[RMDB]
RNA sequence: GGGAACGACUCGAGUAGAGUCGAAAAGAUGAAAGUGGAGUUCAGUAGACAGCCCUUUUCAAGCCCUACGAGAAACUGGGGUUUCUGGAGGAGAAGGAAGGUGAUGAAGGAUCUGUUCUCGUGAGCCAUUCUUUUCCACAUUCGUGUGGAAAAGAAUAAAAGAAACAACAACAACAAC
Reactivity to DMS in 0.01 (KOAc 150mM, MgCl2 10mM, bicine 150mM(pH8.5), 24C), signal-to-noise 7, nucleotides 027 to 126: g000a090u010g000a050a040a060g000u000g010g010a130g020u010u010c050a160g020u020a090g000a080c080a110g000c100c000c020u000u000u000u010c060a080a190g000c050c010c010u010a090c080g010a090g010a040a040a040c100u010g010g010g000g020u000u000u000c030u000g000g000a090g000g000a070g010a050a120g010g010a050a040g010g010u010g010a100u010g000a090a080g000g000a050u020c030u010g010u010u010c010u000c020g010u020g010a100g020c080c110
Reactivity to 2A3 in 0.01 (KOAc 150mM, MgCl2 10mM, bicine 150mM(pH8.5), 24C), signal-to-noise 6, nucleotides 027 to 126: g080a020u160g040a030a030a040g090u130g050g030a090g040u080u070c060a060g040u110a020g050a050c030a030g070c000c000c000u030u020u020u050c070a070a020g010c000c010c000u050a070c050g050a020g080a120a090a010c070u090g010g000g110g000u010u030u020c020u030g060g040a080g010g030a090g030a080a020g080g030a050a040g050g030u060g020a100u090g040a060a040g030g000a040u020c010u030g060u090u010c010u000c020g050u050g020a010g030c010c000
Description: This 177-nucleotide RNA was probed chemically with DMS and 2A3. The data come from the RNA Mapping Database (RMDB), libraries RFM100 and RFMREP. The RNA was probed in 150 mM KOAc, 10 mM MgCl2 and 150 mM bicine (pH 8.5) at 24 C.